This 207-nucleotide RNA was probed chemically with 2A3. 2A3 adducts were read by reverse transcription with SuperScript II with manganese. The RNA was probed in 150 mM KOAc, 10 mM MgCl2 and 150 mM bicine (pH 8.5) at 24 C.
RNA sequence: GGGAACGACUCGAGUAGAGUCGAAAAAUUAUUUUGACGGUCAAAAAGUAAUAACAUUGGGUCAUCCAGACGAAUUAAAAAUCAUCCAGCAGAUUUACAAGGACAACAAUGGUAAGGACAUGCCGUGUUACAAGUGGAGUCCUAAAGCGCCAUGGUAGUGAUGCUACCAAUUCGUUGGUAGCAUCACAAAAGAAACAACAACAACAAC
Reactivity to 2A3 in 0.01 (KOAc 150mM, MgCl2 10mM, bicine 150mM(pH8.5), 24C), signal-to-noise 1, nucleotides 027 to 156: a000u010u010a020u000u110u010u030g020a000c050g000g040u030c050a190a000a080a090a000g040u110a040a270u100a190a110c110a110u100u130g050g000g000u060c030a110u000c050c050a000g040a100c060g160a050a020u250u130a110a090a020a020a070u110c020a040u110c120c040a020g050c080a000g100a020u000u000u070a020c030a000a030g010g010a000c010a070a000c010a080a150u100g180g000u080a070a020g030g010a020c000a000u100g050c090c010g010u070g040u030u080a010c010a070a040g090u080g060g030a020g000u080c010c000u110a100a050a000g030c040g000c000c000a050u210g120g050u050a050